[RMDB]
RNA sequence: GGGAACGACUCGAGUAGAGUCGAAAAACGCGGCUCAUACGUGAGCCGCGACGUGUGGCUUAUAGUUAAAAUCGUCGAUAGCGACACAAUCUGACGAAUAGGUACGUCGCAGGUACGCCUGCGACGAGUUAUUAGUAUCCUUCGGGAUACUAAUAACAAAAGAAACAACAACAACAAC
Reactivity to 2A3 in 0.01 (KOAc 150mM, MgCl2 10mM, bicine 150mM(pH8.5), 24C), signal-to-noise 9, nucleotides 027 to 126: a000c010g010c000g010g010c010u020c010a040u050a070c290g120u030g000a000g000c000c000g010c000g000a010c010g020u030g010u020g090g000c020u120u060a070u080a280g100u160u160a140a090a100a140u110c080g040u020c030g070a060u060a100g050c050g120a030c010a000c010a080a100u060c100u150g040a050c040g040a100a110u110a190g130g030u120a050c000g000u000c000g000c000a000g020g000u040a040c250g070c020c000u000g000c010g000a000c000g000a000
Reactivity to DMS in 0.01 (KOAc 150mM, MgCl2 10mM, bicine 150mM(pH8.5), 24C), signal-to-noise 5, nucleotides 027 to 126: a140c030g030c000g020g010c000u000c000a050u000a120c170g030u010g000a020g020c000c010g030c010g010a000c080g000u000g030u000g010g010c020u010u000a090u010a090g020u020u020a050a070a100a100u010c030g010u010c020g010a040u000a040g010c050g010a050c090a030c090a090a060u000c030u010g020a040c020g000a090a070u010a080g010g000u010a120c010g020u010c000g000c000a010g000g010u000a080c280g020c010c010u010g000c000g010a000c010g000a010